[RMDB]
RNA sequence: GGGAACGACUCGAGUAGAGUCGAAAAGAGCAACUUAGGAUUUUAGGCUCCCCGGUGCGUCUCGAACCGCGCCGGGCCAAACCCACAGGGGCUGGCGGUCCUGUGCGGUCAAAAUCUUUCCGCUGGGAUACCUAUCCCAGUUUCGACUGGGAUAGAAUAGUGAUAUAUAGUUCGCUAUAUAUCACUAAAAAGAAACAACAACAACAAC
Reactivity to DMS in 0.01 (KOAc 150mM, MgCl2 10mM, bicine 150mM(pH8.5), 24C), signal-to-noise 2, nucleotides 027 to 156: g000a050g000c010a040a030c040u010u000a070g000g010a020u010u000u000u020a210g020g020c010u000c020c010c000c030g050g050u000g010c020g020u000c080u000c240g000a230a210c170c000g040c020g030c030c000g040g000g020c010c040a010a040a080c000c000c000a040c050a060g020g010g000g010c020u000g010g010c020g020g000u010c010c010u000g000u000g040c090g050g040u000c070a020a010a020a030u000c030u000u000u000c010c000g030c010u010g010g020g000a100u000a050c120c020u000a040u030c000c000c000a010g000u000u000u000c210g010a070c000u000g010g010g010a030u000a010g010a060a140
Reactivity to 2A3 in 0.01 (KOAc 150mM, MgCl2 10mM, bicine 150mM(pH8.5), 24C), signal-to-noise 2, nucleotides 027 to 156: g000a000g010c010a010a110c070u060u060a070g090g100a090u050u060u040u050a060g000g050c010u000c000c000c000c000g000g010u010g000c010g020u020c100u130c290g080a090a040c020c000g000c000g000c000c000g000g000g000c000c000a030a010a000c000c000c000a010c010a000g000g010g010g010c000u010g010g000c020g000g010u010c010c000u000g000u010g010c210g000g000u040c010a010a020a030a040u030c000u120u160u030c010c000g000c000u010g010g040g000a110u150a130c000c010u000a000u000c010c000c000a010g000u030u060u030c150g050a010c000u010g000g000g000a000u000a000g010a000a010
Description:
An RNA of 207 nucleotides, treated with DMS and 2A3 and read out base by base. The RNA was probed in 150 mM KOAc, 10 mM MgCl2 and 150 mM bicine (pH 8.5) at 24 C.